[RMDB]
RNA sequence: GGGAACGACUCGAGUAGAGUCGAAAAUGAAUGGAAAGAUCCUUGCAGUUGAUGUACAUAUGAAAUGGGAUUAUUUCAUUAUUACAAUGGGCCAGUGAAUAACUUGUCCCUUGCUAUUAAGGGAUUAGAUGAAAACUUAAUUCGUUAAGUUUUCAUCAAAAGAAACAACAACAACAAC
Reactivity to DMS in 0.01 (KOAc 150mM, MgCl2 10mM, bicine 150mM(pH8.5), 24C), signal-to-noise 9, nucleotides 027 to 126: u010g010a090a060u010g010g010a050a090a300g010a040u000c010c010u000u000g010c080a090g010u000u010g010a150u000g010u010a060c130a100u010a050u000g000a030a060a040u010g010g010g010a100u010u000a090u000u000u000c010a020u000u000a070u010u000a050c040a040a060u000g010g000g010c020c060a040g010u000g000a100a060u010a080a050c070u000u000g000u000c000c000c030u000u000g010c150u010a070u010u010a050a040g000g010g000a030u000u000a050
Reactivity to 2A3 in 0.01 (KOAc 150mM, MgCl2 10mM, bicine 150mM(pH8.5), 24C), signal-to-noise 9, nucleotides 027 to 126: u090g030a020a030u060g020g070a080a030a040g050a020u010c010c000u020u060g020c020a040g010u160u120g120a140u090g070u070a040c030a070u140a050u120g060a020a050a060u070g020g040g050a050u080u050a020u030u080u010c010a000u000u140a040u070u060a030c020a030a080u050g000g000g010c010c040a010g010u010g060a080a060u140a120a020c020u020u050g020u040c000c000c000u020u020g010c020u070a140u300u120a080a040g050g000g020a030u040u100a050
Structure probing data (DMS and 2A3) for a 177-nucleotide construct.
For DMS the reverse transcriptase was MarathonRT.
For 2A3, 18,959 sequencing reads were counted.
Values are in units of 0.01, from 0 to 300, in steps of 10.
The DMS profile rests on 26,074 reads.
It was measured as part of the RMDB library OK2TRN.